RNA sequence: GGGAACGACUCGAGUAGAGUCGAAAAUUCCAUUUGAGUAUCCUAAAAACGGGCUUUUCAGCAUGGAACGUACAUAUUAAAUAGUAGGAGUGCAUAGUGGCCCGUAUAGCAGGCAUUAACAUUCCUGAAAACGUGAAAAGGUUCGCCUUUUCACGAACUUUAGAAAAUAGUUCGCUAUUUUCUAAAGAAAAGAAACAACAACAACAAC
Reactivity to DMS in 0.01 (KOAc 150mM, MgCl2 10mM, bicine 150mM(pH8.5), 24C), signal-to-noise 2, nucleotides 027 to 156: u000u000c000c000a150u010u000u010g030a100g010u000a090u000c000c020u000a040a050a040a100a150c130g010g000g020c040u010u020u000u000c050a230g020c030a040u010g010g010a100a080c020g000u000a100c060a090u000a120u000u000a070a100a230u010a130g030u010a020g030g000a120g020u000g010c020a120u000a100g000u030g030g010c010c000c010g020u000a020u000a130g000c060a000g010g040c090a050u010u000a060a050c090a120u000u000c000c010u000g030a070a080a070a100c020g010u000g010a030a010a020a010g030g020u000u010c300g000c010c000u000u000u000u000c000a000c000g000a000a050
Reactivity to 2A3 in 0.01 (KOAc 150mM, MgCl2 10mM, bicine 150mM(pH8.5), 24C), signal-to-noise 2, nucleotides 027 to 156: u060u030c010c000a010u190u050u050g050a030g020u070a090u140c010c010u090a010a060a000a000a030c030g000g000g040c050u020u050u120u110c050a030g000c020a010u010g050g070a160a040c040g080u030a020c010a040u210a090u150u300a140a130a090u150a080g010u020a010g040g100a070g010u030g000c030a060u050a160g120u050g010g000c000c010c040g030u010a000u010a010g000c000a000g000g020c020a000u050u040a050a080c010a060u040u080c010c000u000g030a110a130a030a050c010g010u000g000a010a010a020a010g020g000u040u010c120g010c010c000u000u000u000u000c000a000c010g000a000a000
Structure probing data (DMS and 2A3) for a 207-nucleotide construct.
For DMS the reverse transcriptase was MarathonRT.
2A3 adducts were read by reverse transcription with SuperScript II with manganese.
The data come from the RNA Mapping Database (RMDB), library M2RFPK.